[RMDB]
Chemical mapping of a 207-nucleotide RNA with 2A3. 2A3 adducts were read by reverse transcription with SuperScript II with manganese.
RNA sequence: GGGAACGACUCGAGUAGAGUCGAAAAAUACCUGGGACAAGGUCACCAGCCAGGGAAGACCUCAGGGGCCCUGGGUGUGAGGGUUGGGAAGGCAUGGUCCUCAGAAGCUGAGCACAGCUCUCUCUCUCAGGUACUACGGCGUUGUGACACUGGUGUACCUAAUUAGCCAUUUCGAUGGCUAAUUAGGAAAAGAAACAACAACAACAAC
Reactivity to 2A3 in 0.01 (KOAc 150mM, MgCl2 10mM, bicine 150mM(pH8.5), 24C), signal-to-noise 1, nucleotides 027 to 156: a000u120a000c020c000u000g000g000g020a050c080a120a070g050g000u060c010a020c020c020a020g050c010c000a020g030g000g000a040a060g040a090c000c040u090c080a090g000g000g030g030c100c000c010u060g040g000g000u070g010u080g040a000g030g030g020u070u050g010g060g000a080a020g030g000c030a020u060g100g020u250c000c050u170c050a070g070a240a020g000c030u040g040a020g090c110a020c000a160g000c020u000c000u000c000u000c000u020c000u010c040a010g020g010u000a040c000u070a030c030g160g000c020g000u000u030g010u000g010a040c050a010c100u020g000g040u080g040u060a070
Source: RMDB library OK3TST, as collected in RNAgym.